[RMDB]
RNA sequence: GGGAACGACUCGAGUAGAGUCGAAAAGUGCGAUUAGACAAAGGGGUAGAGCUACAUAUUAGAUAGCUGUAUAAUCGUUCAAGUUACAUCAAAACAUCUUCAAUAUUUAUUACUUACUUUCCUUUCUGCCAGAGUACGGUAUUCGUACCGUACUCAACAGUUGGGAUGGGUUCGCCCAUCCCAACUGAAAAGAAACAACAACAACAAC
Reactivity to 2A3 in 0.01 (KOAc 150mM, MgCl2 10mM, bicine 150mM(pH8.5), 24C), signal-to-noise 1, nucleotides 027 to 156: g000u000g000c040g000a000u030u050a030g040a080c020a040a150a040g050g000g050g020u080a000g050a000g050c020u010a000c000a080u290a260u250u130a150g090a240u020a020g010c000u000g010u080a040u020a010a010u070c020g000u060u050c110a080a030g000u020u070a080c080a200u200c040a030a090a070a030c040a130u070c030u240u000c050a080a000u020a190u250u200u070a080u110u080a050c050u030u030a010c020u080u000u030c030c000u000u110u100c010u040g040c000c090a000g000a000g000u000a000c000g000g000u060a080u000u080c080g000u010a010c000c000g000u020a000c010u000c000a000a000